[RMDB]
This 177-nucleotide RNA was probed chemically with DMS and 2A3.
RNA sequence: GGGAACGACUCGAGUAGAGUCGAAAAGGACCUGAUAUCAGGCAAGAUUACCCGCUGAACUUAAGCAUAUUAAUAAGCGGAGGAAAAGAAACUAACAAGGAUUCCCCUAGUAACGGCGAGUGAAGCGCACCCUAAUGAUGUUCGCAUCAUUAGGGUGAAAAGAAACAACAACAACAAC
Reactivity to DMS in 0.01 (KOAc 150mM, MgCl2 10mM, bicine 150mM(pH8.5), 24C), signal-to-noise 4, nucleotides 027 to 126: g010g010a160c010c000u000g000a280u000a170u000c010a010g000g010c050a100a070g000a200u000u000a160c060c020c010g010c010u010g000a160a130c300u000u000a010a050g030c190a070u000a120u000u000a040a070u000a220a080g030c020g010g000a050g030g010a040a030a080a100g010a070a070a060c080u030a050a090c150a130a070g030g010a210u000u000c020c000c010c080u000a080g030u010a040a090c110g010g040c040g010a070g010u010g030a080a060g020c070g020
Reactivity to 2A3 in 0.01 (KOAc 150mM, MgCl2 10mM, bicine 150mM(pH8.5), 24C), signal-to-noise 2, nucleotides 027 to 126: g040g030a150c020c000u040g040a070u040a080u300c020a010g000g000c020a030a030g010a090u080u070a000c000c000c000g000c010u030g010a110a100c030u010u020a000a000g040c030a140u140a070u230u080a110a050u080a140a010g010c020g030g060a120g100g020a060a050a010a040g060a030a160a050c070u070a050a070c120a080a050g060g000a060u000u040c020c000c000c010u020a040g040u040a130a020c050g060g020c020g050a050g000u060g030a070a000g060c000g020
Reactivities are given for positions 27 through 126.